[RMDB]
RNA sequence: GGGAACGACUCGAGUAGAGUCGAAAACAGAUAGUCAAUGUGAAACAAAGGUUAGUACAUAUAAUCAUCCAGACUUUAUGUAUAUAUCAACAACUGAGAAUGCAAUUAAGAAAGAACAAGUUGAACACCCUCCAAGAUACUUCGGUAUCUUGGAGGGAAAAGAAACAACAACAACAAC
Reactivity to 2A3 in 0.01 (KOAc 150mM, MgCl2 10mM, bicine 150mM(pH8.5), 24C), signal-to-noise 2, nucleotides 027 to 126: c000a060g100a120u300a000g200u110c040a160a080u080g000u130g210a080a070a060c060a210a090a040g080g030u070u050a090g030u200a000c010a030u130a000u040a150a010u090c030a010u060c030c050a000g030a080c060u070u050u000a010u140g070u030a050u000a000u000a010u150c030a010a050c020a030a080c020u020g000a080g100a110a090u000g020c040a080a080u110u230a300a070g200a110a120a010g000a000a000c090a190a040g010u030u000g050a010a000c000a040
Reactivity to DMS in 0.01 (KOAc 150mM, MgCl2 10mM, bicine 150mM(pH8.5), 24C), signal-to-noise 1, nucleotides 027 to 126: c030a070g030a220u000a030g000u000c010a140a060u060g020u030g040a110a040a000c000a060a030a080g000g000u050u000a270g060u070a070c060a040u000a240u030a000a100u010c040a030u030c070c170a280g000a070c150u000u000u000a010u000g040u000a000u000a110u170a070u140c070a140a080c060a060a130c000u000g000a100g000a030a120u000g000c090a000a010u040u000a070a160g030a000a150a080g000a060a010c250a000a010g010u010u010g000a060a020c260a120
Chemical mapping of a 177-nucleotide RNA with 2A3 and DMS. DMS adducts were read by reverse transcription with MarathonRT. The RNA was probed in 150 mM KOAc, 10 mM MgCl2 and 150 mM bicine (pH 8.5) at 24 C. It was measured as part of the RMDB library OK1LIB.